RNA sequence: GGGAACGACUCGAGUAGAGUCGAAAACUUCUAGAGCCAGGGGAUCUGAAGACAGGCACCUGUGUGAACUCACGCAGGUUGCUUGAUGCUAAAGGUUAUCACACAACACACAUGAACUCAUCCCUAUACCAGAACUAAACUAUGGCAAUAAGGCGAAGUAGGUCAGUCAUUUCGAUGACUGACCUACAAAAGAAACAACAACAACAAC
Reactivity to 2A3 in 0.01 (KOAc 150mM, MgCl2 10mM, bicine 150mM(pH8.5), 24C), signal-to-noise 1, nucleotides 027 to 156: c000u010u000c040u060a060g010a000g060c000c080a040g050g000g000g000a010u000c000u110g040a070a000g070a060c000a010g000g000c000a000c000c000u000g000u000g000u030g100a140a130c170u130c300a010c030g000c010a040g000g000u040u050g010c000u000u000g000a000u020g030c000u040a080a040a020g040g050u060u050a100u090c060a010c040a030c010a100a290c090a000c000a050c020a150u110g100a100a010c010u010c040a070u010c010c000c000u050a100u030a060c040c000a000g020a020a000c040u110a060a020a050c120u130a070u160g010g040c000a040a210u120a120a000g000g010c000g020a040a010